[RMDB]
RNA sequence: GGGAACGACUCGAGUAGAGUCGAAAAUUAUAAUGCUUUUAAUGACAAGUGAUGGGGGAGAUAUCAUGUGCUUUUAAAUUGCAUUAGCCUAAUGCAUAAUGAUGUUGAACACUUUUUCAUUUGCUUAUUAAUUAUUUGGAUGUCCUCCUCUGUGAAGCGUAUACUCUCUCUUCGGAGAGAGUAUACGAAAAGAAACAACAACAACAAC
Reactivity to DMS in 0.01 (KOAc 150mM, MgCl2 10mM, bicine 150mM(pH8.5), 24C), signal-to-noise 2, nucleotides 027 to 156: u000u010a090u000a100a080u000g030c070u020u010u000u000a020a040u010g000a050c030a040a010g040u000g000a040u000g010g000g030g020g030a300g020a060u000a030u000c000a030u000g040u000g000c040u020u000u000u010a020a080a200u000u000g050c060a130u000u000a140g040c080c160u000a070a070u000g010c010a010u000a050a050u000g010a030u010g010u000u000g020a160a230c050a090c060u000u010u000u000u010c000a030u000u000u000g010c010u000u000a040u000u000a020a030u010u000a150u000u000u000g020g000a170u000g010u000c020c020u010c010c010u010c090u020g000u000g030a130a130g040
Reactivity to 2A3 in 0.01 (KOAc 150mM, MgCl2 10mM, bicine 150mM(pH8.5), 24C), signal-to-noise 3, nucleotides 027 to 156: u050u030a070u070a170a130u130g000c030u050u060u040u160a050a040u090g040a030c010a040a020g030u020g030a040u040g010g000g030g000g040a030g000a020u020a000u020c050a020u020g050u020g020c000u010u130u050u260a100a200a100u170u200g040c070a100u090u100a040g020c000c020u050a040a010u070g010c000a010u060a140a030u170g010a000u000g010u020u010g170a200a010c030a090c060u090u080u030u040u040c000a000u050u070u030g010c010u060u080a030u020u060a130a010u070u120a080u090u130u090g110g010a040u100g040u050c010c010u020c020c030u060c040u060g090u050g080a090a010g030